[RMDB]
The record gives the reactivity of an RNA of 177 nucleotides to 2A3 and DMS.
For 2A3 the reverse transcriptase was SuperScript II with manganese.
Conditions: 150 mM KOAc, 10 mM MgCl2 and 150 mM bicine (pH 8.5), 24 C.
RNA sequence: GGGAACGACUCGAGUAGAGUCGAAAAUCUUCAUGCUGUGGUGCUGUUUGUAUCCUCAUUUAUGGUCUGCAAGCGGAAAUGAGUUCAGUCUUUCAUUCAAUUGGCGGAAUUCGUUAAUUGGCAACCAUAUAAUGCAGCGAUUCGUCGCUGCAUUAUAAAAAGAAACAACAACAACAAC
Reactivity to 2A3 in 0.01 (KOAc 150mM, MgCl2 10mM, bicine 150mM(pH8.5), 24C), signal-to-noise 3, nucleotides 027 to 126: u030c030u090u120c070a090u140g020c020u050g010u030g050g040u030g010c000u030g050u020u080u060g080u060a060u050c010c000u020c020a060u040u090u110a080u080g060g020u050c090u050g020c020a040a030g020c030g050g080a060a090a030u050g010a000g000u010u030c000a030g020u010c030u000u090u060c060a110u070u110c080a120a140u060u030g000g000c010g040g000a070a130u080u020c010g060u010u040a110a070u060u040g080g020c030a030a010c000c000a000
Reactivity to DMS in 0.01 (KOAc 150mM, MgCl2 10mM, bicine 150mM(pH8.5), 24C), signal-to-noise 4, nucleotides 027 to 126: u000c020u010u010c100a040u020g020c040u000g000u020g000g020u000g000c010u000g010u010u000u020g010u000a070u010c010c020u010c090a080u030u050u010a070u010g000g010u000c060u000g000c020a060a070g010c130g020g010a070a050a020u000g000a040g010u000u020c020a070g010u000c010u010u000u000c100a120u030u060c290a060a050u030u000g000g000c000g010g000a040a060u010u010c000g000u000u010a070a120u030u000g010g000c080a040a040c020c030a120